An RNA of 177 nucleotides, treated with 2A3 and DMS and read out base by base. The reactions ran in a buffer of 150 mM KOAc, 10 mM MgCl2 and 150 mM bicine (pH 8.5), at 24 C. Reactivities are given for positions 27 through 126. For DMS, 2,549 sequencing reads were counted.
[RMDB]
RNA sequence: GGGAACGACUCGAGUAGAGUCGAAAACUACGCAUGGCAUUGGCGCGCAUGUAUUUCAGCCAACAAAAGGCCGCACAGGGCUACGCGAUGUUGGAGAAAGUGGCCACAGACCCUACCGGAACGUCAGCUCACAAGGCUUAUUCGUAAGCCUUGUGAGAAAAGAAACAACAACAACAAC
Reactivity to 2A3 in 0.01 (KOAc 150mM, MgCl2 10mM, bicine 150mM(pH8.5), 24C), signal-to-noise 2, nucleotides 027 to 126: c050u100a040c070g000c050a060u080g030g000c000a030u040u090g090g000c040g000c010g000c060a040u070g050u110a130u020u070u060c060a060g040c020c000a020a010c030a000a250a030a070g050g000c030c010g050c010a080c070a110g110g000g000c010u090a040c060g020c030g170a100u080g000u040u040g010g010a000g070a010a080a000g060u120g050g000c010c000a030c000a000g060a060c030c010c000u060a040c020c020g100g010a040a050c040g020u040c030a030g070
Reactivity to DMS in 0.01 (KOAc 150mM, MgCl2 10mM, bicine 150mM(pH8.5), 24C), signal-to-noise 3, nucleotides 027 to 126: c050u010a130c150g000c030a090u000g010g010c020a070u010u000g010g020c060g000c090g000c030a040u000g000u010a080u000u010u000c050a160g010c010c010a050a040c060a050a070a190a120g010g000c060c020g040c110a060c150a090g000g000g000c030u010a060c150g010c110g000a120u010g000u000u000g020g020a150g020a030a050a070g020u010g000g020c020c030a110c130a130g000a100c030c000c020u000a090c060c030g000g000a080a060c130g010u000c070a120g000